Source information: Chemical mapping of a 177-nucleotide RNA with DMS. For DMS the reverse transcriptase was MarathonRT. For DMS, 1,565 sequencing reads were counted. The reactions ran in a buffer of 150 mM KOAc, 10 mM MgCl2 and 150 mM bicine (pH 8.5), at 24 C.
[RMDB]
RNA sequence: GGGAACGACUCGAGUAGAGUCGAAAACAUAAUGCGAGUCAUAUAGAGUGACUGAGAUGAUUGUGCAGCAAUAGCAAUGUUGUGGCUAUAGGUAUUAUUAGGCAAAGUAAGCGUCAGCAAAAAGAGGGAAAAAGGAGAUCUUCGGAUCUCCUUUUUCAAAAGAAACAACAACAACAAC
Reactivity to DMS in 0.01 (KOAc 150mM, MgCl2 10mM, bicine 150mM(pH8.5), 24C), signal-to-noise 2, nucleotides 027 to 126: c050a040u010a050a090u000g020c050g000a090g000u000c020a030u010a250u010a100g000a210g010u000g000a040c040u020g010a090g020a050u000g030a050u010u000g010u000g020c070a070g010c050a110a060u010a040g000c040a090a060u000g010u010u000g010u010g000g000c040u010a100u010a080g020g010u010a020u020u000a070u000u010a040g010g010c010a020a050a090g000u000a070a080g020c020g000u000c060a030g000c060a040a040a080a040a120g020a090g010g000